This 177-nucleotide RNA was probed chemically with DMS.

RNA sequence: GGGAACGACUCGAGUAGAGUCGAAAAUGAAAGUGCUGUUGACUGCCCGACUGAACCAGAAAUUGACGUGCCCUUUGGACGCGGUGACAGCAAAGAUUGCGGAGGACAAUGAUCGUGAGGCGCGUGACACCAGGGAGGGUUUCGACCCUCCCUGGUGAAAAGAAACAACAACAACAAC
Reactivity to DMS in 0.01 (KOAc 150mM, MgCl2 10mM, bicine 150mM(pH8.5), 24C), signal-to-noise 1, nucleotides 027 to 126: u000g000a060a120a080g030u000g040c000u000g000u000u000g020a120c060u000g000c030c040c000g020a100c140u000g000a160a120c060c010a030g000a050a090a140u000u000g040a100c030g030u000g010c010c030c040u000u000u000g030g010a070c130g000c050g020g030u000g000a060c030a060g000c040a020a050a080g000a120u000u000g060c060g000g000a120g000g020a060c090a060a030u000g030a080u000c130g010u000g000a130g000g010c040g010c030g000u000g000a300
The DMS profile rests on 970 reads.
The reactions ran in a buffer of 150 mM KOAc, 10 mM MgCl2 and 150 mM bicine (pH 8.5), at 24 C.